[RMDB]
RNA sequence: GGGAACGACUCGAGUAGAGUCGAAAAGCGCAAGACUCCACAGCAGCAGAGGUGGGGGGACAUAUCACAGCCUCUGCCCCCGGCUGUGAUGCCACCGAGGGGCUCGCCUGCUGAUGGCUUCAACAGGUGAGCCACGAACGUUCGCGUUCGUGGCUCAAAAAGAAACAACAACAACAAC
Reactivity to DMS in 0.01 (KOAc 150mM, MgCl2 10mM, bicine 150mM(pH8.5), 24C), signal-to-noise 1, nucleotides 027 to 126: g010c090g010c080a080a090g050a190c040u000c050c020a070c100a070g010c040a050g040c110a100g000a080g010g020u010g000g000g020g000g000g010a090c130a190u010a070u000c010a000c050a060g000c010c000u030c080u000g020c020c030c020c140c300g000g000c030u000g000u000g000a030u010g010c040c040a050c010c040g010a160g020g010g000g010c040u000c090g040c080c000u000g000c010u010g040a030u000g000g010c120u010u000c020a020a040c040a010g000g000